[RMDB]
RNA sequence: GGGAACGACUCGAGUAGAGUCGAAAAGAUAUGGAGCAGAACUACUCGUGAAGACUCGUUGAAAUCGGAAACGAUGGAGAGUUGGAGGCGAGCUGCUCCUAAGUCAAAACGUCCCUUCGGGGACGAAGAGUUACACUUUGUUCGCAAAGUGUAACUCAAAAGAAACAACAACAACAAC
Reactivity to DMS in 0.01 (KOAc 150mM, MgCl2 10mM, bicine 150mM(pH8.5), 24C), signal-to-noise 3, nucleotides 027 to 126: g010a040u000a300u000g030g000a040g030c010a020g000a080a030c050u020a300c000u000c010g030u030g000a300a210g000a000c010u000c010g010u010u030g010a120a100a050u010c020g000g000a150a050a150c000g000a010u000g000g010a070g010a020g000u000u010g000g020a270g000g010c040g000a000g010c000u000g000c010u020c000c000u000a000a030g000u000c060a050a060a100a190c020g000u000c000c000c000u000u020c160g020g000g010g030a010c000g000a010a030
Reactivity to 2A3 in 0.01 (KOAc 150mM, MgCl2 10mM, bicine 150mM(pH8.5), 24C), signal-to-noise 3, nucleotides 027 to 126: g030a000u050a030u160g000g000a000g000c020a000g000a070a050c080u210a040c000u300c010g060u100g050a060a040g020a020c010u010c010g110u240u090g010a070a040a010u020c010g010g040a050a040a060c010g020a000u020g010g040a050g000a010g010u020u020g070g030a090g010g300c000g000a010g030c000u000g000c000u010c000c000u010a020a000g020u000c000a000a010a070a100c010g000u010c010c000c000u000u020c270g040g000g000g010a010c000g010a050a020